[RMDB]
RNA sequence: GGGAACGACUCGAGUAGAGUCGAAAAUCAUCAAAUUCGAUUUCGUUGAGAAGGGCGGCGAGCGUGACCGAGGCCGUUUCGUGUGCUUCGCCGUUCAAAACGAUGGUCAUGCAUAGUCCUCCACAAAGACGCUCAGUAUCUUCGGAUACUGAGCGUCAAAAGAAACAACAACAACAAC
Reactivity to DMS in 0.01 (KOAc 150mM, MgCl2 10mM, bicine 150mM(pH8.5), 24C), signal-to-noise 1, nucleotides 027 to 126: u010c090a120u000c110a140a200a180u010u000c100g010a060u010u000u000c040g000u000u000g010a190g010a120a110g010g000g010c020g000g000c050g050a010g030c010g020u000g010a110c160c000g000a070g000g000c140c110g040u010u000u000c130g010u020g000u000g000c020u010u010c080g030c110c000g000u000u000c010a080a070a040a050c020g020a070u000g010g000u000c040a000u060g000c030a130u000a070g000u030c030c040u000c030c070a050c130a000a090a230
This 177-nucleotide RNA was probed chemically with DMS.
DMS adducts were read by reverse transcription with MarathonRT.
The data come from the RNA Mapping Database (RMDB), library OK2TST.